[RMDB]
Notes:
An RNA of 207 nucleotides, treated with DMS and 2A3 and read out base by base. For DMS the reverse transcriptase was MarathonRT. The RNA was probed in 150 mM KOAc, 10 mM MgCl2 and 150 mM bicine (pH 8.5) at 24 C. For DMS, 5,135 sequencing reads were counted.
RNA sequence: GGGAACGACUCGAGUAGAGUCGAAAAAUAAGAUUUAACAAUCAGGACCAAUCAAGGCACCAGCACCAAAUAAUCAAAACACAUGCCAGCUGCCAAUAGCUGAUAUGGCCACAUUGGUGUCCAAGUAUGAACACUGGCUCUGCUGCUGGGCACCCCACGCAUCAUAAAAUUUCGAUUUUAUGAUGCGAAAAGAAACAACAACAACAAC
Reactivity to DMS in 0.01 (KOAc 150mM, MgCl2 10mM, bicine 150mM(pH8.5), 24C), signal-to-noise 3, nucleotides 027 to 156: a100u000a080a130g030a170u000u000u000a080a130c100a120a140u000c050a140g010g000a080c010c030a060a120u010c070a100a130g040g000c020a090c030c030a140g010c020a080c040c030a050a060a100u000a080a100u000c070a080a070a100a110c090a070c020a000u000g020c000c000a040g030c020u010g010c070c180a090a170u000a040g010c020u000g000a040u010a020u000g010g010c050c080a040c090a140u000u010g030g000u010g010u010c030c020a030a150g020u000a030u000g010a040a050c030a080c060u000g030g020c030u000c070u000g020c040u000g010c020u000g010g010g000c010a110c040c000c030c030a290
Reactivity to 2A3 in 0.01 (KOAc 150mM, MgCl2 10mM, bicine 150mM(pH8.5), 24C), signal-to-noise 7, nucleotides 027 to 156: a000u130a050a070g030a050u070u080u170a100a050c050a030a050u080c050a050g050g040a040c040c020a010a040u090c060a070a090g050g000c040a050c070c010a010g010c020a010c040c050a070a060a070u150a070a050u160c090a050a050a090a030c110a020c010a040u070g020c010c000a020g010c060u040g030c040c040a120a100u120a100g020c020u020g050a060u040a050u170g040g000c020c010a050c010a110u050u140g050g000u010g020u020c020c010a040a010g060u040a080u220g050a080a010c060a020c140u060g040g010c010u010c020u050g040c010u010g020c020u040g000g020g000c000a020c000c010c010c010a020